This 177-nucleotide RNA was probed chemically with 2A3 and DMS. The DMS profile rests on 4,592 reads. The RNA was probed in 150 mM KOAc, 10 mM MgCl2 and 150 mM bicine (pH 8.5) at 24 C. It was measured as part of the RMDB library OK2TRN. For 2A3, 2,639 sequencing reads were counted.
RNA sequence: GGGAACGACUCGAGUAGAGUCGAAAAAUCGCGAUAUGCAUCGGCGCCGGCAUGCUACGAUUAGCUACGGCCGUAAUAUCGAUAUCGCGGCGCCGAUCGCGCGCGCGGCGCGCUACGUAAUGCUACGAUCUCUAAGUACCUUCGGGUACUUAGAGAUAAAAGAAACAACAACAACAAC
Reactivity to 2A3 in 0.01 (KOAc 150mM, MgCl2 10mM, bicine 150mM(pH8.5), 24C), signal-to-noise 2, nucleotides 027 to 126: a000u090c050g000c010g050a060u050a040u300g000c020a000u020c020g010g000c010g030c020c000g100g050c110a090u150g060c020u050a050c030g100a110u100u060a020g000c010u020a070c130g130g010c020c010g070u030a070a020u030a020u150c020g020a070u000a010u080c050g010c000g020g000c000g010c000c000g030a020u000c020g000c000g000c000g030c010g020c010g040g050c000g000c020g030c070u080a020c040g060u090a130a120u140g020c040u040a040c070g050
Reactivity to DMS in 0.01 (KOAc 150mM, MgCl2 10mM, bicine 150mM(pH8.5), 24C), signal-to-noise 4, nucleotides 027 to 126: a050u010c030g010c010g020a060u000a040u010g030c110a060u000c030g000g000c010g010c010c000g020g030c080a060u010g020c110u010a060c090g000a060u000u010a080g020c040u010a070c150g020g000c020c220g010u010a030a040u010a020u000c020g000a090u000a030u000c060g020c000g000g020c020g020c010c010g000a020u000c070g020c020g020c130g010c010g000c090g010g000c070g030c130g000c060u010a040c080g000u020a060a070u000g010c040u000a090c130g010